[RMDB]
Annotation:
Structure probing data (DMS and 2A3) for a 207-nucleotide construct. Values are in units of 0.01, from 0 to 300, in steps of 10. The RNA was probed in 150 mM KOAc, 10 mM MgCl2 and 150 mM bicine (pH 8.5) at 24 C. 2A3 is a SHAPE reagent: it acylates the 2'-hydroxyl of flexible nucleotides of all four kinds. For 2A3 the reverse transcriptase was SuperScript II with manganese. For DMS, 2,562 sequencing reads were counted. It was measured as part of the RMDB library RSTRND.
RNA sequence: GGGAACGACUCGAGUAGAGUCGAAAACGAGCUAUGAAUCGCGUUCACAGACUAGACGGCAAUGGGCUCCUCGCGGGGCUUAAGAUAUAGUCGAACCCCUCAGAGAUGAGGAUGGAAUCAAUGCUAGUAGCUGGUUCCUGCCGAAGUUUCCCUCAGGCUACAUGAAGGUGUUCGCACCUUCAUGUAGAAAAGAAACAACAACAACAAC
Reactivity to DMS in 0.01 (KOAc 150mM, MgCl2 10mM, bicine 150mM(pH8.5), 24C), signal-to-noise 2, nucleotides 027 to 156: c030g020a060g000c020u010a050u020g010a160a010u010c070g000c060g040u010u000c040a130c060a260g010a090c020u000a070g000a140c090g040g010c010a050a160u000g000g020g000c000u000c010c000u010c230g000c300g000g000g010g050c040u000u000a020a180g010a060u000a090u000a100g030u010c010g000a060a200c020c010c000c020u010c010a090g000a270g010a230u000g000a040g000g020a070u020g040g000a070a080u000c040a000a050u010g010c030u000a230g030u000a060g000c020u000g030g000u000u000c010c010u010g000c020c000g000a100a300g020u000u000u000c010c020c010u010c080a080g000g000
Reactivity to 2A3 in 0.01 (KOAc 150mM, MgCl2 10mM, bicine 150mM(pH8.5), 24C), signal-to-noise 2, nucleotides 027 to 156: c030g030a010g020c020u100a010u180g090a040a120u180c090g010c040g060u120u100c080a070c030a100g030a040c020u040a020g040a110c030g060g030c050a070a140u110g010g030g000c000u010c000c010u070c080g050c180g000g010g000g000c000u030u020a010a020g020a030u120a010u040a140g020u010c010g000a020a040c010c000c000c000u010c010a020g010a020g000a090u050g010a010g010g020a030u160g030g030a050a050u050c070a100a040u130g020c010u020a050g010u050a020g050c010u020g020g000u010u050c010c010u020g030c000c010g090a110a030g030u030u040u020c000c010c020u060c030a040g010g080